[RMDB]
RNA sequence: GGGAACGACUCGAGUAGAGUCGAAAAGCUGUUUUCGAACAGCGGUUUGGCGUACUACCUUAGACAUGAGCUAUAGGCGAGUUUCUCCCAAAUAGGAGAAACGAUGAGCCUUAAGCUCAACAGCUAAGGUAUCGCAUAGUGUGGGUUUCGACCCAAAUAUGUAAUGUAAUUUCGAUUACAUUACAUAAAAAGAAACAACAACAACAAC
Reactivity to DMS in 0.01 (KOAc 150mM, MgCl2 10mM, bicine 150mM(pH8.5), 24C), signal-to-noise 5, nucleotides 027 to 156: g010c000u000g010u000u000u000u000c220g010a030a060c010a020g000c010g020g020u000u000u000g020g020c000g040u010a090c140u000a020c010c010u010u000a080g010a100c060a300u000g000a030g030c000u000a290u000a020g020g020c000g000a160g000u000u000u000c000u000c000c010c010a050a160a260u010a040g000g010a030g000a020a010a010c010g010a080u010g010a300g010c000c000u000u000a120a080g000c000u000c010a040a060c120a190g000c000u000a010a010g010g010u000a000u000c020g020c010a110u000a060g020u000g010u000g000g020g010u000u000u000c070g020a250c000c000c000a010a120a200
Reactivity to 2A3 in 0.01 (KOAc 150mM, MgCl2 10mM, bicine 150mM(pH8.5), 24C), signal-to-noise 4, nucleotides 027 to 156: g000c000u000g050u020u050u070u150c200g090a020a000c000a010g020c040g010g010u140u090u130g080g000c020g040u080a090c040u020a000c010c000u020u010a010g050a130c020a130u060g010a000g000c000u020a030u070a130g000g000c010g010a040g020u020u000u000c010u030c010c020c000a230a260a040u300a080g000g010a000g000a000a010a000c000g070a090u130g070a010g000c010c000u000u010a020a000g000c000u000c000a000a000c010a010g010c000u000a000a000g000g000u010a010u050c000g010c000a010u050a110g140u160g040u080g010g050g000u030u030u130c120g090a060c000c000c000a000a050a000
This 207-nucleotide RNA was probed chemically with DMS and 2A3.
The 2A3 profile rests on 4,170 reads.
It was measured as part of the RMDB library RNAMAK.